This 177-nucleotide RNA was probed chemically with 2A3 and DMS. For 2A3 the reverse transcriptase was SuperScript II with manganese. The reactions ran in a buffer of 150 mM KOAc, 10 mM MgCl2 and 150 mM bicine (pH 8.5), at 24 C. Source: RMDB library OK2TST, as collected in RNAgym. The 2A3 profile rests on 1,016 reads.
RNA sequence: GGGAACGACUCGAGUAGAGUCGAAAAAGAAAAGAUCCGUUUCGGCGGGCACUAAGCUAAUUGGUUGGGUCUUGCCCGCUGGUCCAUGAUUGUGGCAAAAGAACUCAGUGGGAUCCACCAAGAGGCAUGCGUAAAUCAUGUUCGCAUGAUUUACGCAAAAAGAAACAACAACAACAAC
Reactivity to 2A3 in 0.01 (KOAc 150mM, MgCl2 10mM, bicine 150mM(pH8.5), 24C), signal-to-noise 1, nucleotides 027 to 126: a000g150a000a040a000a060g080a120u000c000c000g020u040u030u120c210g070g060c000g000g000g000c050a030c120u130a080a040g010c010u020a030a020u010u010g000g110u080u250g030g000g060u050c000u070u150g070c000c000c000g030c010u000g000g030u020c000c010a020u080g100a300u260u300g090u080g030g000c030a010a000a300a000g070a090a030c050u060c170a020g010u040g000g000g010a000u000c060c080a020c000c010a000a010g010a000g000g000c000a010
Reactivity to DMS in 0.01 (KOAc 150mM, MgCl2 10mM, bicine 150mM(pH8.5), 24C), signal-to-noise 2, nucleotides 027 to 126: a140g010a070a100a150a250g010a110u010c020c030g020u000u000u010c130g030g000c010g040g020g000c120a070c190u020a110a080g020c000u000a040a290u000u010g000g000u010u010g010g030g000u000c110u000u010g000c020c000c030g020c020u000g000g000u000c000c000a010u000g010a150u010u000g020u000g000g020c290a080a080a110a100g000a080a060c020u000c020a020g040u010g010g000g010a050u000c070c020a010c000c010a000a020g000a280g010g010c030a090